[RMDB]
RNA sequence: GGGAACGACUCGAGUAGAGUCGAAAACAUUCUUGAAAAAGUGAUGUAGAUUUAUAGCCCAUAACGUUUUUGAAUUACAUCGACGAUACGGCGUCGAAAGAAAAAUAAAUAGACCGUAUGAAAGAAAAAAACAACAGUAGCUUCGGCUACUGUUGAAUCUAAUAGCAUUGUUCGCAAUGCUAUUAGAAAAAGAAACAACAACAACAAC
Reactivity to 2A3 in 0.01 (KOAc 150mM, MgCl2 10mM, bicine 150mM(pH8.5), 24C), signal-to-noise 2, nucleotides 027 to 156: c000a000u020u010c000u020u040g040a090a010a040a030a000g050u060g040a020u000g080u050a070g090a160u060u260u130a180u200a090g010c030c020c010a110u110a060a120c080g020u020u030u040u100u300g140a090a070u140u060a110c010a020u000c000g000a000c000g010a010u000a000c010g000g000c010g010u000c000g000a020a050a000g060a000a040a000a000a020u110a020a040a000u040a030g040a020c000c010g000u020a000u020g040a000a100a070g060a070a060a010a010a000a000a050c010a000a000c000a000g010u020a010g000c000u070u060c280g110g000c000u000a000c000u000g000u000u000g000a000a000
Reactivity to DMS in 0.01 (KOAc 150mM, MgCl2 10mM, bicine 150mM(pH8.5), 24C), signal-to-noise 1, nucleotides 027 to 156: c040a110u010u000c040u000u010g000a100a080a110a100a050g000u010g000a020u010g000u000a060g020a180u010u010u000a120u000a300g000c000c060c130a070u020a060a070c060g010u000u030u000u000u010g010a090a090u000u000a100c010a100u000c010g020a010c020g020a090u000a050c010g010g050c000g000u010c050g000a050a090a170g000a010a070a110a090a120u000a000a050a140u000a070g040a120c000c000g000u000a010u000g020a230a090a210g040a020a000a130a060a110a080a210c010a010a040c010a000g000u000a000g010c000u000u000c300g060g040c000u010a010c000u000g000u000u010g000a050a040